[RMDB]
RNA sequence: GGGAACGACUCGAGUAGAGUCGAAAAGAGAUCAAGUACGGGGAGUCACUGUGCUUCGUGCAGCAUGUGGCCUCAGGACUGUGGCUCACCUAUGCUGCUCCAGACCCCAAGGCCCUGCGGCUCGGCGCAUGAUGGACCAAUUCGUUGGUCCAUCAUGAAAAGAAACAACAACAACAAC
Reactivity to 2A3 in 0.01 (KOAc 150mM, MgCl2 10mM, bicine 150mM(pH8.5), 24C), signal-to-noise 5, nucleotides 027 to 126: g060a000g000a040u140c060a050a040g030u040a070c060g020g000g000g040a080g070u080c030a020c080u060g010u050g060c000u060u080c050g070u080g000c000a020g030c020a040u130g070u190g080g010c000c010u010c010a010g030g120a050c060u020g000u010g040g010c050u050c100a110c000c000u070a120u150g020c040u000g000c000u020c000c010a090g030a140c010c000c000c010a000a010g030g000c030c000c000u040g020c030g030g000c010u010c040g040g000c040g000
Reactivity to DMS in 0.01 (KOAc 150mM, MgCl2 10mM, bicine 150mM(pH8.5), 24C), signal-to-noise 7, nucleotides 027 to 126: g000a100g000a090u010c070a070a060g020u000a050c090g010g000g010g000a110g010u000c030a110c070u010g020u010g000c020u010u010c100g010u000g010c010a030g000c030a030u000g020u010g020g010c010c010u000c070a060g010g010a070c110u000g020u000g010g000c010u010c030a080c110c260u010a060u010g000c040u000g000c010u010c070c040a090g000a140c040c010c010c040a090a100g000g000c020c020c040u000g000c050g000g010c020u000c050g010g010c110g010